[RMDB]
RNA sequence: GGGAACGACUCGAGUAGAGUCGAAAACGCUGGGACACUCCCGUCGUUUGACGUGUCUCCCCACCAGUGGCUGCCUGAAGCGCGCACGGGCAGCCACUGAGGACACCGAGACGGAGGUGUCCUGUGCUGAAGCGCGCACGGCAACCGAAAGGUGCGAUCCUUUAUUUCUCUUCGGAGAAAUAAAGGAAAAAGAAACAACAACAACAAC
Reactivity to DMS in 0.01 (KOAc 150mM, MgCl2 10mM, bicine 150mM(pH8.5), 24C), signal-to-noise 1, nucleotides 027 to 156: c050g000c120u000g020g020g020a120c030a040c010u000c000c010c010g020u000c000g020u010u000u000g020a130c180g010u000g000u000c020u040c300c100c020c030a300c110c000a010g020u020g030g000c020u000g040c010c000u000g010a050a080g000c060g010c010g060c000a270c000g000g010g040c020a040g000c020c010a000c000u000g000a070g010g000a020c000a030c010c040g000a000g000a100c020g050g020a110g020g080u000g000u020c000c000u000g030u000g030c010u010g050a180a110g000c060g000c040g030c000a120c040g000g020c040a110a090c020c020g020a140a160a100g000g000u000g000c020g000a070
Reactivity to 2A3 in 0.01 (KOAc 150mM, MgCl2 10mM, bicine 150mM(pH8.5), 24C), signal-to-noise 1, nucleotides 027 to 156: c020g030c010u050g000g000g000a010c000a000c020u080c020c010c010g000u010c000g000u030u190u260g020a010c000g000u020g020u000c030u060c070c030c010c020a030c000c020a000g000u000g010g000c010u010g000c020c000u020g010a200a040g000c000g010c000g020c000a010c010g020g000g000c000a000g000c010c000a000c000u000g000a000g010g000a000c000a000c010c010g020a000g000a030c000g000g010a060g000g010u000g010u010c000c000u020g000u040g000c020u120g060a070a020g000c010g000c010g000c010a020c030g160g000c040a150a140c020c010g050a090a060a050g040g010u030g000c010g020a080

An RNA of 207 nucleotides, treated with DMS and 2A3 and read out base by base.
For DMS, 1,732 sequencing reads were counted.
In probing experiments dimethyl sulfate is read out at A N1 and C N3, which are open when not base-paired.
The RNA was probed in 150 mM KOAc, 10 mM MgCl2 and 150 mM bicine (pH 8.5) at 24 C.